RNA sequence: GGGAACGACUCGAGUAGAGUCGAAAAUUGAACGGAUUCGUCCGUUCAACGCGUGCGUUCCAAACGUAGUACAAAAGUACAGACGAAAGCACAAGGAUCAAAUGAUACAGCCGUUCGCGGCUGUAAAAGUAGGUGCAUAUUUCGAUAUGCACCUACUAAAAGAAACAACAACAACAAC
Reactivity to 2A3 in 0.01 (KOAc 150mM, MgCl2 10mM, bicine 150mM(pH8.5), 24C), signal-to-noise 3, nucleotides 027 to 126: u030u000g000a000a010c010g000g000a000u030u030c150g060u010c030c000g010u010u000c000a000a010c010g040c020g010u050g020c020g060u110u040c020c000a050a020a020c030g020u030a010g030u020a020c040a050a300a080a070g000u000a020c000a080g160a030c030g080a110a020a020g030c020a020c010a070a050g100g010a120u120c060a040a090a140u140g040a030u020a080c000a010g010c030c000g030u070u080c280g020c010g070g000c020u010g000u000a020a010a000
Reactivity to DMS in 0.01 (KOAc 150mM, MgCl2 10mM, bicine 150mM(pH8.5), 24C), signal-to-noise 4, nucleotides 027 to 126: u010u000g000a010a000c000g000g010a050u000u010c230g040u000c000c000g000u000u000c010a010a010c130g010c220g010u000g000c020g000u000u000c050c060a090a110a200c090g010u000a060g000u000a020c020a100a080a080a150g010u010a010c020a080g000a070c080g010a080a030a100g000c010a010c030a110a200g010g000a120u010c180a100a090a090u010g010a260u000a020c000a020g030c000c000g020u000u000c180g010c000g010g020c010u000g010u000a010a020a060
An RNA of 177 nucleotides, treated with 2A3 and DMS and read out base by base. For 2A3, 4,137 sequencing reads were counted. For DMS, 3,564 sequencing reads were counted. For 2A3 the reverse transcriptase was SuperScript II with manganese.